Structure probing data (2A3 and DMS) for a 177-nucleotide construct. For 2A3 the reverse transcriptase was SuperScript II with manganese. The 2A3 profile rests on 4,063 reads. For DMS, 6,946 sequencing reads were counted.
RNA sequence: GGGAACGACUCGAGUAGAGUCGAAAAAUAAAGUAGUCUCCUGCAGCGUCUGAGGUUUCCGUUGCAGUCCUCGGAACCAGGACCUCGGCGUGGCCAAGCGAGUUAUGGCGACGAAGGCCGUGAAAAAUACCUAAACAUUGUUCGCAAUGUUUAGGUAAAAAGAAACAACAACAACAAC
Reactivity to 2A3 in 0.01 (KOAc 150mM, MgCl2 10mM, bicine 150mM(pH8.5), 24C), signal-to-noise 3, nucleotides 027 to 126: a000u220a030a090a020g070u080a030g040u050c010u010c020c000u010g020c030a050g050c000g040u020c040u180g030a050g020g040u020u150u000c030c010g060u070u110g060c080a030g110u090c000c000u020c000g040g000a050a050c050c010a050g060g050a030c000c010u010c020g060g000c010g020u040g000g000c010c010a060a010g050c050g040a020g000u070u120a090u140g040g010c030g000a050c050g020a100a020g090g010c020c020g030u060g080a080a030a020a010a050
Reactivity to DMS in 0.01 (KOAc 150mM, MgCl2 10mM, bicine 150mM(pH8.5), 24C), signal-to-noise 6, nucleotides 027 to 126: a080u000a060a070a100g020u000a110g010u000c040u000c020c020u000g010c080a210g000c040g010u000c030u010g030a040g010g000u000u000u010c060c050g010u010u000g010c080a110g000u010c050c010u000c110g010g000a060a060c110c080a180g000g000a040c040c010u000c020g000g000c010g000u000g000g010c040c080a100a100g010c080g000a050g010u000u010a070u010g000g010c030g000a070c070g010a140a100g010g010c010c020g020u010g000a030a060a060a090a120